[RMDB]
RNA sequence: GGGAACGACUCGAGUAGAGUCGAAAAGAUAUGGACGGAACAUACGACAACAGCUAGGGUCGGAAACGACCCUAGACAUGUCGCGUGUCCGUCCUAAGUCAAACCCCCACGGUUCGCCGUGGGGGAAGUCUAUUGCGAAGUUCGCUUCGCAAUAGACAAAAGAAACAACAACAACAAC
Reactivity to DMS in 0.01 (KOAc 150mM, MgCl2 10mM, bicine 150mM(pH8.5), 24C), signal-to-noise 2, nucleotides 027 to 126: g000a020u020a300u000g010g010a020c000g030g000a060a030c000a020u010a070c010g020a000c000a060a050c300a140g000c020u010a020g000g000g030u000c000g020g000a200a100a300c000g000a000c000c000c000u000a000g020a000c050a200u010g000u000c020g040c000g060u000g030u000c000c000g000u000c000c000u000a020a030g010u000c020a130a120a300c000c000c000c020c010a000c000g000g000u010u000c300g000c010c000g040u000g000g000g010g010g000a000a010
Reactivity to 2A3 in 0.01 (KOAc 150mM, MgCl2 10mM, bicine 150mM(pH8.5), 24C), signal-to-noise 2, nucleotides 027 to 126: g050a020u100a040u170g000g010a010c010g050g000a290a020c010a020u060a020c020g010a010c020a250a030c050a180g030c000u010a000g020g010g000u000c010g020g030a050a030a020c000g000a000c030c000c000u000a000g000a000c010a040u020g020u000c020g000c000g000u020g000u060c000c010g000u020c000c000u000a010a010g010u000c040a060a020a270c000c030c000c020c000a020c020g030g030u040u050c300g050c200c000g000u010g000g020g000g000g000a000a020